[RMDB]
RNA sequence: GGGAACGACUCGAGUAGAGUCGAAAAGAUGGCCAUGAAUGGCCUUCAGGCCAUCGCAGAGGCAUUAGAACAGGAAGGAAGCAAUCACGAGGUUCAUGUUGAUGAAAGGCUGCGAGAGAGGGCGCUGACUUUAGGCCUGGUUCGCCAGGCCUAAAGUAAAAGAAACAACAACAACAAC
Reactivity to DMS in 0.01 (KOAc 150mM, MgCl2 10mM, bicine 150mM(pH8.5), 24C), signal-to-noise 1, nucleotides 027 to 126: g030a000u000g000g020c020c030a080u010g020a100a010u000g010g060c260c020u000u000c040a050g010g000c000c000a040u000c020g020c150a040g010a190g020g000c080a080u000u000a060g020a080a050c070a030g000g020a080a080g010g010a060a050g010c090a080a050u010c100a090c150g000a040g010g000u000u000c070a050u000g020u010u000g030a080u010g010a040a070a090g000g000c030u000g030c060g000a060g000a040g000a130g040g000g010c140g040c110u010g000